[RMDB]
RNA sequence: GGGAACGACUCGAGUAGAGUCGAAAAAUUCACUGUCUGGCUCUUUACAAAGGAACUUUGCCACCUUCUACUCUAGGCUGUGGUCCUGACUCAGUGCUUGAGGCCAGCCUCCUCUCACUUUGUCUGCCACCGGAUAGCUUUUCGAAGCUAUCCGGUGAAAAGAAACAACAACAACAAC
Reactivity to DMS in 0.01 (KOAc 150mM, MgCl2 10mM, bicine 150mM(pH8.5), 24C), signal-to-noise 1, nucleotides 027 to 126: a080u000u010c060a160c090u010g010u010c030u000g000g010c060u000c030u000u000u010a120c170a060a080a090g000g000a120a040c100u000u010u000g010c050c070a040c060c020u000u010c060u000a070c080u010c060u000a090g000g000c000u020g020u010g020g000u000c040c000u000g010a090c030u000c030a060g020u000g010c210u000u000g000a060g020g000c100c020a130g000c060c070u000c020c030u000c010u010c030a060c080u000u000u000g000u010c030u000g000c250
Reactivity to 2A3 in 0.01 (KOAc 150mM, MgCl2 10mM, bicine 150mM(pH8.5), 24C), signal-to-noise 2, nucleotides 027 to 126: a000u000u040c010a010c060u050g030u090c050u050g080g000c040u030c020u140u180u090a070c110a000a060a090g070g020a170a030c030u090u120u160g060c040c020a060c010c020u050u040c040u010a130c040u040c000u040a020g040g000c020u010g050u080g080g070u030c020c010u000g040a020c000u020c060a020g030u060g190c040u050u090g030a020g020g000c010c020a050g010c030c000u040c000c000u010c010u000c000a010c000u090u050u060g050u000c040u040g040c000